This 207-nucleotide RNA was probed chemically with 2A3 and DMS.
Source: RMDB library OK3TST, as collected in RNAgym.
The RNA was probed in 150 mM KOAc, 10 mM MgCl2 and 150 mM bicine (pH 8.5) at 24 C.
For DMS the reverse transcriptase was MarathonRT.
2A3 is a SHAPE reagent: it acylates the 2'-hydroxyl of flexible nucleotides of all four kinds.
RNA sequence: GGGAACGACUCGAGUAGAGUCGAAAAGGAGCAUGUGAAGGUGUCUUACUGCUGACUCUGGAGGAGAAGACAUUUCCAGAAGAUAUGUGCUACCCAGAUCAAGGUGGUGUCUGUCAGGGCACAUGUGUAGGAGGUGGUCCCUACGCACAAGGCGAAGAUUCCGGAUAUGAUUCGUCAUAUCCGGAAUAAAAGAAACAACAACAACAAC
Reactivity to 2A3 in 0.01 (KOAc 150mM, MgCl2 10mM, bicine 150mM(pH8.5), 24C), signal-to-noise 4, nucleotides 027 to 156: g060g010a020g010c070a040u060g030u040g130a080a050g030g010u030g040u050c040u050u110a150c030u050g060c020u040g040a070c040u030c020u030g020g010a020g030g060a030g030a100a010g020a030c030a030u050u060u000c010c020a040g020a070a010g030a110u110a030u120g020u000g010c010u060a080c020c010c010a010g010a060u060c080a060a050g050g020u050g000g020u030g050u010c030u010g100u080c080a050g000g020g010c010a000c010a050u040g020u010g010u030a020g000g020a020g000g040u060g020g040u170c000c000c000u010a020c010g010c000a020c030a100a070g080g000c030g040a040a000g050
Reactivity to DMS in 0.01 (KOAc 150mM, MgCl2 10mM, bicine 150mM(pH8.5), 24C), signal-to-noise 3, nucleotides 027 to 156: g020g010a080g030c030a050u000g010u000g020a110a090g000g010u000g000u010c050u000u010a100c060u000g020c060u010g020a130c060u000c010u000g000g010a140g040g030a150g010a080a080g010a090c030a060u000u010u000c010c010a100g010a090a160g020a120u000a030u000g010u000g020c010u000a080c030c040c000a160g020a070u000c060a080a100g010g020u000g010g030u010g020u000c030u000g010u000c100a110g020g000g020c020a050c060a040u000g020u010g010u000a050g000g020a090g010g030u000g010g030u000c040c010c000u000a000c000g000c010a040c060a050a160g020g010c020g020a080a120g000